[RMDB]
RNA sequence: GGGAACGACUCGAGUAGAGUCGAAAACAUGUACUAGCUCACGUGCGUACGCGAUCUAUCGUACAGCUAGGUACUACUCUCAUGGUACCUAGGAUCAGUACCUGUGCCAUGUCUAGCUAUAGUACCAGCUUUGACCUGACUUCGGUCAGGUCAAAGCAAAAGAAACAACAACAACAAC
Reactivity to DMS in 0.01 (KOAc 150mM, MgCl2 10mM, bicine 150mM(pH8.5), 24C), signal-to-noise 1, nucleotides 027 to 126: c120a100u000g010u000a010c000u000a010g000c040u000c300a010c030g000u000g000c270g000u030a000c040g060c070g010a070u000c100u000a050u000c190g090u040a030c060a070g010c020u000a020g030g030u020a000c000u000a070c160u060c010u040c130a130u020g000g000u000a000c010c230u000a000g000g010a020u030c270a170g000u000a010c010c000u010g000u000g020c010c000a000u000g000u000c050u000a070g010c070u000a090u000a020g070u000a040c120c130a120
Reactivity to 2A3 in 0.01 (KOAc 150mM, MgCl2 10mM, bicine 150mM(pH8.5), 24C), signal-to-noise 2, nucleotides 027 to 126: c060a140u160g020u060a050c010u000a010g010c000u020c010a060c050g020u020g080c110g060u110a000c010g030c030g000a110u060c020u110a110u110c030g030u050a070c020a020g050c070u030a040g010g030u030a000c000u010a030c010u000c010u050c070a050u100g000g010u000a010c030c060u010a060g070g050a100u130c080a020g080u160a070c010c010u000g000u050g040c020c000a030u030g010u000c080u060a010g080c020u050a010u030a270g020u010a030c050c040a010